[RMDB]
RNA sequence: GGGAACGACUCGAGUAGAGUCGAAAAAAAAAAAGAUAUGGAUGGGUGCAUCGCUUUGAUCUCACGUAACAUCACGUCGGAAACGACGUGUGGUGAGGGAGCGAUGCCCAUCCUAAGUCAAAAAAAACAUCAUCAAAUACUUCGGUAUUUGAUGAUGAAAAGAAACAACAACAACAAC
Reactivity to DMS in 0.01 (KOAc 150mM, MgCl2 10mM, bicine 150mM(pH8.5), 24C), signal-to-noise 2, nucleotides 027 to 126: a000a000a030a040a090a090a110g000a000u000a020u000g000g000a010u000g010g000g000u020g020c050a000u000c000g030c000u000u010u010g010a040u010c010u000c000a000c000g010u000a030a040c240a010u000c000a000c010g000u000c000g020g000a010a010a030c010g020a010c010g020u000g010u000g020g000u010g000a020g000g000g010a000g030c000g020a000u000g000c010c000c000a010u000c000c000u000a000a040g000u010c010a010a000a000a040a090a060a070a210
Reactivity to 2A3 in 0.01 (KOAc 150mM, MgCl2 10mM, bicine 150mM(pH8.5), 24C), signal-to-noise 2, nucleotides 027 to 126: a020a000a000a000a010a040a060g010a030u040a010u040g000g010a000u000g030g120g120u300g180c040a010u010c010g030c030u300u240u020g010a010u010c010u000c000a000c010g050u070a090a010c030a150u260c000a000c010g020u010c000g010g000a010a000a010c000g000a000c020g000u000g000u000g020g010u000g000a000g000g010g000a000g000c020g000a000u000g000c000c000c000a010u020c000c000u000a010a000g000u000c000a000a010a010a020a120a030a020a180
Source: RMDB library TTRDES, as collected in RNAgym. Chemical mapping of a 177-nucleotide RNA with DMS and 2A3. The reactions ran in a buffer of 150 mM KOAc, 10 mM MgCl2 and 150 mM bicine (pH 8.5), at 24 C. For 2A3, 5,672 sequencing reads were counted. Reactivities are rounded to 0.1 and cut off at 0 and 3. 2A3 adducts were read by reverse transcription with SuperScript II with manganese.